[RMDB]
The record gives the reactivity of an RNA of 207 nucleotides to DMS and 2A3. The reactions ran in a buffer of 150 mM KOAc, 10 mM MgCl2 and 150 mM bicine (pH 8.5), at 24 C. Values are in units of 0.01, from 0 to 300, in steps of 10. The DMS profile rests on 3,149 reads. It was measured as part of the RMDB library OK3TST. The 2A3 profile rests on 4,479 reads.
RNA sequence: GGGAACGACUCGAGUAGAGUCGAAAAACUGGUAUCAGGAAGCGCUGAGGAAGUGGGAAGAUGCCGCCGAAGCGUCAAUCAGGAAGCUAGCAAGCGAUAUCGUUGCUGACUGGACAACGAAAGUUAGAACCGCCAACAACAUUGGCAAAUCUCGCAAAGUGCUUAUUAUGUUCGCAUAAUAAGCACUAAAAGAAACAACAACAACAAC
Reactivity to DMS in 0.01 (KOAc 150mM, MgCl2 10mM, bicine 150mM(pH8.5), 24C), signal-to-noise 3, nucleotides 027 to 156: a100c050u000g030g000u010a060u000c060a120g020g030a110a090g010c070g020c030u000g010a300g000g020a040a040g000u000g000g030g000a100a080g000a050u000g020c030c020g010c060c040g000a190a040g010c020g040u000c040a030a170u000c040a100g030g000a050a200g030c040u000a080g030c030a050a060g000c060g030a130u000a090u000c110g000u000u020g000c000u000g000a080c090u010g020g030a110c030a030a060c000g040a080a060a080g010u000u000a070g000a040a100c050c080g000c010c020a020a040c030a080a050c040a300u000u020g000g000c000a060a040a020u000c040u000c020g020c050a130a070
Reactivity to 2A3 in 0.01 (KOAc 150mM, MgCl2 10mM, bicine 150mM(pH8.5), 24C), signal-to-noise 5, nucleotides 027 to 156: a000c050u050g010g010u060a050u170c050a040g010g050a080a030g020c010g010c050u060g010a010g040g030a070a100g100u140g030g030g010a050a070g080a110u130g050c030c030g000c030c010g020a040a010g000c010g060u020c020a030a050u050c010a010g050g040a060a030g020c040u050a010g030c070a120a010g010c020g040a030u040a030u110c020g010u010u020g000c010u000g020a080c050u090g000g030a040c010a040a020c030g030a100a020a010g010u060u060a030g020a070a060c060c040g010c010c010a010a020c030a030a030c010a100u020u010g000g010c000a020a060a070u070c100u020c020g010c010a100a110